The record gives the reactivity of an RNA of 177 nucleotides to 2A3 and DMS.

[RMDB]
RNA sequence: GGGAACGACUCGAGUAGAGUCGAAAAGUUAACACCUUCGGGUGUUAACAAAUAAGGGAAGUCGAGUGCAUAAAGCACAGUCUACCCAAGACAAAACGACAAAAACAUCUCCCUUCGGGGAGAUGAAGAUAACGGUUAACUUCGGUUAACCGUUAUCAAAAGAAACAACAACAACAAC
Reactivity to 2A3 in 0.01 (KOAc 150mM, MgCl2 10mM, bicine 150mM(pH8.5), 24C), signal-to-noise 2, nucleotides 027 to 126: g000u010u000a000a000c010a010c010c010u040u080c200g100g000g000u000g000u000u000a000a000c000a000a000a000u130a020a030g150g000g010a090a060g020u010c010g050a060g020u000g020c070a040u210a300a270a030g010c010a000c000a000g010u000c000u000a030c000c000c010a000a010g000a020c010a010a070a010a040c030g010a000c000a000a140a020a000a000c000a010u000c000u020c010c000c000u000u040c190g020g000g000g010a000g020a000u000g010a000a000
Reactivity to DMS in 0.01 (KOAc 150mM, MgCl2 10mM, bicine 150mM(pH8.5), 24C), signal-to-noise 2, nucleotides 027 to 126: g000u000u000a020a000c000a020c000c010u000u010c140g020g020g010u000g000u000u000a000a000c000a050a080a030u000a090a110g020g010g040a080a050g000u000c010g030a140g040u000g010c020a030u000a160a050a240g000c000a000c000a190g000u000c000u000a050c000c000c000a140a060g030a030c040a020a090a180a120c070g010a070c050a080a040a080a070a110c010a000u000c000u000c000c010c000u010u000c180g030g010g010g030a000g000a000u000g000a030a100
The RNA was probed in 150 mM KOAc, 10 mM MgCl2 and 150 mM bicine (pH 8.5) at 24 C. For DMS the reverse transcriptase was MarathonRT. The DMS profile rests on 1,207 reads. It was measured as part of the RMDB library M2PK50. Reactivities are rounded to 0.1 and cut off at 0 and 3. Values cover nucleotides 27 to 126. 2A3 adducts were read by reverse transcription with SuperScript II with manganese.